[RMDB]
RNA sequence: GGGAACGACUCGAGUAGAGUCGAAAAGGACUCCGUGAGGAGUCCGUGCAGCGAGAGCUGCACAAGCGGUUAUUGUCACAGGGUCCGCCUGCUCUUCGAUGUGGAGAAGAGCAGAGUAGUAGGCGCACGAUUUAUAGUGCGCCAUACGACUGUGAGAAAGUAUGAAGACAUUCGUGUCUUCAUACUUAAAAGAAACAACAACAACAAC
Reactivity to 2A3 in 0.01 (KOAc 150mM, MgCl2 10mM, bicine 150mM(pH8.5), 24C), signal-to-noise 3, nucleotides 027 to 156: g000g000a000c000u000c000c000g010u030g040a030g000g000a000g000u000c000c000g000u000g030c010a000g010c010g020a070g010a010g030c000u000g000c010a000c020a000a010g000c010g000g040u070u200a030u030u080g040u040c000a000c000a000g000g000g020u010c000c000g000c000c000u000g000c000u000c010u010u000c010g070a110u140g080u090g140g060a100g000a040a000g010a000g000c000a000g000a000g000u010a000g000u000a010g000g000c000g000c000a000c010g040a050u000u240u020a130u050a040g000u000g000c000g000c000c000a000u000a000c000g010a010c000u000g000u000g000a010g040a000
Reactivity to DMS in 0.01 (KOAc 150mM, MgCl2 10mM, bicine 150mM(pH8.5), 24C), signal-to-noise 2, nucleotides 027 to 156: g010g000a040c000u000c000c010g010u010g010a300g040g010a030g010u000c000c020g020u000g020c000a000g030c020g010a290g010a300g050c000u010g020c000a000c030a060a130g010c040g020g020u000u010a040u010u000g020u000c000a040c020a040g010g000g000u000c030c040g030c010c000u000g010c000u010c000u010u000c010g020a210u000g010u020g030g010a300g000a010a010g000a040g010c000a000g000a060g030u000a080g010u000a060g000g000c010g030c000a010c010g000a200u000u010u000a160u010a120g010u000g020c010g000c000c000a000u000a000c010g020a060c000u010g000u000g000a100g010a130

Overview:
This 207-nucleotide RNA was probed chemically with 2A3 and DMS. Values are in units of 0.01, from 0 to 300, in steps of 10. Reactivities are given for positions 27 through 156. For DMS, 5,484 sequencing reads were counted. DMS adducts were read by reverse transcription with MarathonRT.